[RMDB]
Source: RMDB library TTRDES, as collected in RNAgym. An RNA of 177 nucleotides, treated with DMS and 2A3 and read out base by base. Values cover nucleotides 27 to 126. The DMS profile rests on 2,760 reads. The reactions ran in a buffer of 150 mM KOAc, 10 mM MgCl2 and 150 mM bicine (pH 8.5), at 24 C.
RNA sequence: GGGAACGACUCGAGUAGAGUCGAAAAGAUAUGGACUUCCGCAGAUAUGAGAACUACGCUACGUUCGGAAACGAACGCUAGCGCUCAUGUAGGAAGUCCUAAGUCAAAACUAUGGUUCGCCAUAGAACGCAAGUAUUAACUUCGGUUAAUACUUGCGAAAAGAAACAACAACAACAAC
Reactivity to DMS in 0.01 (KOAc 150mM, MgCl2 10mM, bicine 150mM(pH8.5), 24C), signal-to-noise 3, nucleotides 027 to 126: g000a030u000a300u010g000g000a010c000u000u000c000c000g000c070a140g000a140u000a010u000g010a040g020a220a130c200u010a300c030g020c000u000a000c000g000u010u000c000g000g000a080a070a150c000g010a010a020c000g010c300u010a020g010c000g010c000u000c010a030u010g010u010a080g020g000a010a010g000u000c000c000u000a000a070g000u010c030a080a050a150a240c000u000a010u000g000g020u000u010c300g020c010c000a010u000a010g010a120a180
Reactivity to 2A3 in 0.01 (KOAc 150mM, MgCl2 10mM, bicine 150mM(pH8.5), 24C), signal-to-noise 4, nucleotides 027 to 126: g010a000u050a040u160g000g010a010c020u010u000c030c020g080c130a050g110a250u300a100u300g100a030g000a180a130c220u240a010c300g000c000u010a000c010g010u010u000c020g010g000a060a030a010c000g000a020a000c000g080c110u000a000g000c010g000c010u000c020a090u000g030u210a300g000g030a000a000g000u000c000c000u000a010a010g000u000c000a000a000a110a160c010u000a020u030g000g060u040u100c300g170c050c020a010u010a010g080a130a020